[RMDB]
RNA sequence: GGGAACGACUCGAGUAGAGUCGAAAAGUGACGCGUUUCGCGACGCGCGUCGAUGGGGCGGGCGCGAAACCCGUUCGCCGCGAUGCGGCGGACGGGGUAUGGCCGAGCGCCGUCCGUCGCGGCGAGAACCAUGCUAAAUAUUCGUAUUUAGCAUGGUAAAAGAAACAACAACAACAAC
Reactivity to DMS in 0.01 (KOAc 150mM, MgCl2 10mM, bicine 150mM(pH8.5), 24C), signal-to-noise 9, nucleotides 027 to 126: g020u010g010a040c010g010c020g000u000u000u010c050g010c050g020a050c070g010c010g010c010g010u000c020g010a100u010g020g020g010g020c030g010g010g020c020g010c020g010a060a110a130c000c000c000g010u000u000c000g020c000c000g020c000g010a170u010g020c000g010g010c000g010g000a000c000g000g000g000g010u010a030u010g010g010c060c040g010a170g010c020g010c010c010g010u000c040c040g010u000c010g010c010g010g010c200g010a120g000a140
Reactivity to 2A3 in 0.01 (KOAc 150mM, MgCl2 10mM, bicine 150mM(pH8.5), 24C), signal-to-noise 9, nucleotides 027 to 126: g130u080g020a020c020g030c010g020u020u120u150c040g000c030g050a030c010g010c000g000c000g040u050c020g020a110u130g020g020g030g120c070g040g030g030c070g000c020g060a140a060a030c000c000c010g000u010u000c000g000c010c000g000c040g200a220u300g010c000g000g000c000g000g000a000c000g000g000g000g000u030a040u050g070g000c050c040g030a030g010c040g010c000c000g000u010c010c020g010u010c010g000c010g020g000c040g040a070g020a020